[RMDB]
RNA sequence: GGGAACGACUCGAGUAGAGUCGAAAACACCCUAUAUCUGGGAGAUGUAGAAUUUAAGGCUGUGUAGUCACUGUCCUCAAGCUGCUCACAGCUUUGUGUAAGACACUCAAGGGAACAUGCAAAGCUCCAUUUAACGCAAUUUCGAUUGCGUUAAAUGAAAAGAAACAACAACAACAAC
Reactivity to DMS in 0.01 (KOAc 150mM, MgCl2 10mM, bicine 150mM(pH8.5), 24C), signal-to-noise 9, nucleotides 027 to 126: c180a180c030c040c010u010a080u010a060u010c060u010g020g010g010a060g010a060u000g010u000a040g010a120a070u000u000u000a050a040g010g010c010u000g000u000g010u010a030g020u010c090a080c050u000g000u010c110c120u000c110a070a050g020c120u000g010c030u000c020a030c030a010g000c010u000u000u000g010u000g010u000a070a090g000a160c050a030c030u000c060a100a100g010g010g000a080a070c100a050u000g010c110a050a070a110g010c070u000c080
Reactivity to 2A3 in 0.01 (KOAc 150mM, MgCl2 10mM, bicine 150mM(pH8.5), 24C), signal-to-noise 9, nucleotides 027 to 126: c030a040c000c010c000u070a080u010a020u130c060u070g120g110g030a090g030a070u030g030u050a040g040a260a140u080u150u120a110a010g010g000c010u000g000u000g100u210a030g060u150c050a010c070u050g060u180c030c030u090c040a070a030g010c080u020g000c010u020c010a040c000a010g000c030u000u000u010g010u000g010u020a060a040g030a010c010a010c050u050c020a040a030g050g020g010a060a020c030a050u120g030c060a100a060a030g020c010u050c040

The record gives the reactivity of an RNA of 177 nucleotides to DMS and 2A3. The RNA was probed in 150 mM KOAc, 10 mM MgCl2 and 150 mM bicine (pH 8.5) at 24 C.